[RMDB]
RNA sequence: GGGAACGACUCGAGUAGAGUCGAAAAGAGGACCGAACAGGUGAACGUUGAAAAGUUCUCUGAUGAGCUGAGGGUAGGAGUGAAAGGCUAAUCAAACCCCGUGAUAGCUGGUUCUCUUCGAAAUGCAGUAAUUUAACGUGUUCGCACGUUAAAUUACAAAAGAAACAACAACAACAAC
Reactivity to DMS in 0.01 (KOAc 150mM, MgCl2 10mM, bicine 150mM(pH8.5), 24C), signal-to-noise 5, nucleotides 027 to 126: g000a030g010g010a010c030c010g030a090a120c020a050g020g010u030g020a000a040c030g000u010u030g030a070a140a110a170g000u000u020c010u000c010u010g010a120u030g010a080g010c030u000g000a060g020g010g010u000a060g000g000a030g010u000g000a100a080a190g000g010c070u020a040a070u000c040a020a080a100c020c000c010c210g000u020g020a050u000a040g000c010u010g000g030u000u000c000u000c000u000u000c080g010a070a060a080u020g000c120a100
Reactivity to 2A3 in 0.01 (KOAc 150mM, MgCl2 10mM, bicine 150mM(pH8.5), 24C), signal-to-noise 6, nucleotides 027 to 126: g020a000g000g000a000c010c070g020a150a050c010a000g030g040u130g060a000a010c020g040u130u160g200a100a100a030a050g000u000u010c000u000c000u010g140a180u080g050a030g000c010u020g030a220g010g040g000u080a060g010g110a040g030u070g130a150a070a060g160g000c040u080a090a020u080c040a100a060a190c010c010c010c000g030u080g070a100u110a040g030c040u020g010g000u000u010c010u000c000u000u000c040g060a100a030a010u150g030c030a020
Description
Source: RMDB libraries RFM100 and RFMREP, as collected in RNAgym. Structure probing data (DMS and 2A3) for a 177-nucleotide construct. For DMS the reverse transcriptase was MarathonRT. Reactivities are given for positions 27 through 126. Conditions: 150 mM KOAc, 10 mM MgCl2 and 150 mM bicine (pH 8.5), 24 C.